[RMDB]
RNA sequence: GGGAACGACUCGAGUAGAGUCGAAAAGAUGGGUCCGAUGGAUUAAUGCGUCGCCUGCCAUUGGAUCCUGAUUGAUAGAUUGACGGCGACGGUCGGAUCACUCGGUAAUUCGGUGCUCAACGAGUGAUCCGUGAUGAUAGUUAAGAGGAGCACCUAACAUAUAAAUUAAUUUCGAUUAAUUUAUAUGAAAAGAAACAACAACAACAAC
Reactivity to DMS in 0.01 (KOAc 150mM, MgCl2 10mM, bicine 150mM(pH8.5), 24C), signal-to-noise 1, nucleotides 027 to 156: g010a110u000g000g010g070u010c020c000g020a060u000g010g020a090u000u000a040a040u000g010c000g070u000c030g040c010c040u000g000c000c010a030u010u000g040g020a020u010c000c010u000g000a070u000u010g020a240u020a120g020a240u000u000g010a060c140g010g020c000g030a020c000g000g060u010c000g020g000a030u000c010a000c020u020c000g020g020u000a070a140u000u000c080g000g020u010g040c030u000c010a070a070c000g020a050g030u000g000a000u000c000c020g020u000g020a060u000g000a180u000a090g000u010u000a110a170g000a200g020g010a140g010c030a020c010c000u010a060a200
Reactivity to 2A3 in 0.01 (KOAc 150mM, MgCl2 10mM, bicine 150mM(pH8.5), 24C), signal-to-noise 3, nucleotides 027 to 156: g050a060u150g000g000g010u010c000c000g010a000u000g000g000a020u050u260a250a090u210g100c020g000u000c000g000c000c020u000g000c000c000a000u010u000g000g000a010u010c000c010u010g030a020u000u160g040a030u050a130g120a070u010u250g100a050c060g000g020c000g000a000c000g000g030u050c010g010g000a000u000c000a000c000u010c010g020g100u090a050a080u150u180c060g000g000u000g000c010u000c000a010a010c010g000a000g000u000g000a000u010c000c000g000u010g000a020u030g010a010u050a170g150u240u170a120a040g050a030g130g000a000g010c000a000c000c000u000a030a000